Source: RMDB library M2RFPK, as collected in RNAgym. Chemical mapping of a 207-nucleotide RNA with DMS and 2A3. Conditions: 150 mM KOAc, 10 mM MgCl2 and 150 mM bicine (pH 8.5), 24 C. 2A3 adducts were read by reverse transcription with SuperScript II with manganese. For DMS, 2,074 sequencing reads were counted.
[RMDB]
RNA sequence: GGGAACGACUCGAGUAGAGUCGAAAAGAAAGAAAGUACUGAAAGUAUUGUGGGAAAUAAUGUGUAAAUCAUUGACCGUUCCUGCGCUGGUAAGAAUAGAAUUUUAGUCCAGACACCACCAGUAUAACCAAUCUAGUGACCUUCGGGUCACUAGAAAGAUAUCUAUCCGGUUCGCCGGAUAGAUAUCAAAAGAAACAACAACAACAAC
Reactivity to DMS in 0.01 (KOAc 150mM, MgCl2 10mM, bicine 150mM(pH8.5), 24C), signal-to-noise 1, nucleotides 027 to 156: g020a100a120a090g020a090a110a170g010u000a120c020u020g010a090a060a160g020u000a010u010u020g020u000g000g020g000a120a110a050u000a040a020u010g020u000g010u000a130a080a160u020c040a050u000u000g020a150c060c000g000u000u000c000c010u000g000c110g020c080u000g010g000u000a090a030g010a080a090u000a070g000a010a300u010u010u000u000a120g030u000c000c000a000g000a140c090a090c020c020a050c000c010a040g020u000a040u000a050a080c090c020a010a170u000c000u010a000g000u010g030a020c000c000u000u000c290g080g020g010u000c000a000c000u000a000g000a000a040a110
Reactivity to 2A3 in 0.01 (KOAc 150mM, MgCl2 10mM, bicine 150mM(pH8.5), 24C), signal-to-noise 3, nucleotides 027 to 156: g050a020a060a000g060a040a140a030g030u030a020c020u030g040a160a080a040g120u110a180u250u140g000u020g000g000g000a010a010a000u050a000a010u030g020u000g030u040a000a020a040u040c020a000u010u010g000a010c000c020g010u100u140c050c040u050g010c010g000c000u000g000g010u030a020a010g010a070a040u110a090g160a160a090u080u070u040u020a020g000u000c000c000a010g010a030c020a010c050c000a000c000c000a020g030u030a040u030a090a040c050c040a040a090u000c000u000a000g000u000g000a000c010c000u010u050c290g070g000g000u000c010a000c000u000a000g000a000a000a000